RNA sequence: GGGAACGACUCGAGUAGAGUCGAAAAAAUUACAUCGACUGAUAUUAAUAUAAAAAUAGAUGUACACGUUCAACGACUAGCGAGUGAUGUAAAUCAGUCAAAUAAUCUCGCCACGAGCGCCCGACAUGGCGUGUAUAGUUUUCGAACUAUACACGCCAAAAGAAACAACAACAACAAC
Reactivity to 2A3 in 0.01 (KOAc 150mM, MgCl2 10mM, bicine 150mM(pH8.5), 24C), signal-to-noise 2, nucleotides 027 to 126: a000a000u200u050a010c010a000u020c020g020a010c010u040g040a000u020a060u180u130a130a140u190a080u080a170a110a080a010a000u140a090g010a010u000g040u040a040c030a000c080g220u150u120c100a080a050c080g050a060c040u020a010g000c000g080a010g080u030g000a010u060g040u090a000a010a130u000c000a000g040u000c000a000a000a040u060a030a100u020c000u030c000g000c000c030a020c010g030a010g080c000g030c000c000c000g020a060c070a150u090

Source: RMDB library RFM100, as collected in RNAgym.
This 177-nucleotide RNA was probed chemically with 2A3.
2A3 adducts were read by reverse transcription with SuperScript II with manganese.
The 2A3 profile rests on 729 reads.
Values cover nucleotides 27 to 126.
2A3 is a SHAPE reagent: it acylates the 2'-hydroxyl of flexible nucleotides of all four kinds.
Conditions: 150 mM KOAc, 10 mM MgCl2 and 150 mM bicine (pH 8.5), 24 C.